The record gives the reactivity of an RNA of 177 nucleotides to DMS and 2A3. The DMS profile rests on 792 reads. The 2A3 profile rests on 1,727 reads. Values cover nucleotides 27 to 126.
RNA sequence: GGGAACGACUCGAGUAGAGUCGAAAAAUGAACGGCCACACGAGGGUUUAACUGUCUCUUUCCUCUAAUCAAUGAAAUUGACCUUCUCGUGAAGAGGCGAGAAUAAACAUAUAAGACGAGAAGACCCGAGAAUCAGGGAAUUCGUUCCCUGAUUCUCAAAAGAAACAACAACAACAAC
Reactivity to DMS in 0.01 (KOAc 150mM, MgCl2 10mM, bicine 150mM(pH8.5), 24C), signal-to-noise 1, nucleotides 027 to 126: a120u010g030a180a140c120g040g000c050c020a050c030a120c070g040a070g020g020g000u000u000u000a030a110c110u000g010u000c020u000c010u000u000u000c020c010u010c090u000a080a110u010c100a080a080u010g000a010a010a300u000u000g000a140c190c020u000u010c000u000c040g000u000g000a150a020g000a050g030g000c030g000a030g010a060a080u000a040a100a040c130a040u000a080u000a160a050g010a060c030g010a060g060a020a110g010a080c100c040c100
Reactivity to 2A3 in 0.01 (KOAc 150mM, MgCl2 10mM, bicine 150mM(pH8.5), 24C), signal-to-noise 2, nucleotides 027 to 126: a030u140g040a070a070c020g040g000c000c030a000c010a000c020g010a120g060g030g030u010u120u080a070a070c020u020g040u030c000u010c000u020u030u030c010c020u000c040u060a060a080u100c080a010a100u130g180a240a050a070u180u070g050a060c000c020u010u000c020u000c020g010u010g080a070a000g030a020g060g000c030g020a010g000a020a070u160a050a060a030c060a000u210a010u060a240a000g080a020c030g020a000g000a040a010g040a040c030c030c040